[RMDB]
RNA sequence: GGGAACGACUCGAGUAGAGUCGAAAACGGAGACCCUGUGGUCCAGGAUCCUGAACAGCCCCCCCAGCCCCCCAGAUCAUGGGCCGGUCAGCCGACAAACCUAUAUCCCCUCCCCGAGAUGAGCCCGGAGCUGUGCUAAUUUCGAUUAGCACAGCUCAAAAGAAACAACAACAACAAC
Reactivity to 2A3 in 0.01 (KOAc 150mM, MgCl2 10mM, bicine 150mM(pH8.5), 24C), signal-to-noise 1, nucleotides 027 to 126: c020g020g020a010g020a040c000c010c040u090g060u090g060g030u010c020c010a000g000g020a020u010c000c020u040g030a070a050c010a040g040c030c000c000c000c000c000c030a000g000c000c000c000c000c000c000a000g000a040u050c010a050u120g010g050g000c060c030g010g010u040c010a050g020c040c000g000a010c030a000a060a030c000c000u050a030u030a080u160c000c000c000c000u000c000c000c000c010g030a020g040a130u080g020a000g020c000c000c050g000
Reactivity to DMS in 0.01 (KOAc 150mM, MgCl2 10mM, bicine 150mM(pH8.5), 24C), signal-to-noise 1, nucleotides 027 to 126: c110g010g010a070g000a030c010c000c150u000g000u000g000g000u040c090c030a070g040g010a140u000c040c010u000g000a100a090c180a060g000c000c000c000c010c000c000c000a150g060c020c000c000c010c080c020a050g010a090u030c060a030u000g020g000g000c020c020g000g000u000c050a070g000c000c010g000a060c090a070a060a180c060c060u010a040u070a250u000c010c000c000c060u000c140c020c000c000g060a040g000a100u000g010a090g000c010c000c000g020